[RMDB]
RNA sequence: GGGAACGACUCGAGUAGAGUCGAAAAACGCUUCACAAUGUGCGGCAAAGAAACAUUGUUUAUGCAAAGGCACUUCGCAAUGUGUGCUCAAACAUUGCUUAUUCAAACACGUUUCACAAUGUGCGACAAAACUUCACGGUCUUCGGACCGUGAAGAACAUCAAUAAAGAGUUCGCUCUUUAUUGAUGAAAAGAAACAACAACAACAAC
Reactivity to 2A3 in 0.01 (KOAc 150mM, MgCl2 10mM, bicine 150mM(pH8.5), 24C), signal-to-noise 9, nucleotides 027 to 156: a000c010g000c000u010u010c010a000c000a010a000u010g000u010g010c010g060g030c120a140a080a070g090a030a050a000c010a010u010u000g100u060u100u120a120u140g070c050a060a070a070g180g000c000a000c010u030u020c030g000c010a010a010u010g010u000g050u020g040c100u130c200a040a050a000c010a000u000u010g000c010u070u110a170u130u140c080a030a070a030c040a010c080g040u030u100u120c090a080c050a110a090u120g020u040g050c030g060a040c080a030a100a040a040c000u000u000c000a000c000g000g000u000c000u030u070c100g080g000a000c000c000g000u000g000a000a000g000a000a000
Reactivity to DMS in 0.01 (KOAc 150mM, MgCl2 10mM, bicine 150mM(pH8.5), 24C), signal-to-noise 4, nucleotides 027 to 156: a020c010g010c010u020u000c040a080c000a020a010u010g080u000g050c010g010g030c030a100a070a120g030a030a020a020c010a000u000u000g010u000u000u000a090u020g010c010a050a210a130g000g020c000a050c000u000u000c120g000c150a100a090u010g020u020g020u000g020c040u000c040a090a160a060c040a050u000u000g000c010u010u010a080u010u000c040a110a170a030c020a020c010g010u000u000u000c200a140c200a040a050u000g010u000g020c000g000a180c070a040a060a080a100c000u000u000c010a010c000g010g020u000c030u000u010c300g040g000a020c000c000g030u000g000a000a000g000a070a100
About this RNA: Chemical mapping of a 207-nucleotide RNA with 2A3 and DMS. The RNA was probed in 150 mM KOAc, 10 mM MgCl2 and 150 mM bicine (pH 8.5) at 24 C. Source: RMDB library M2RFPK, as collected in RNAgym.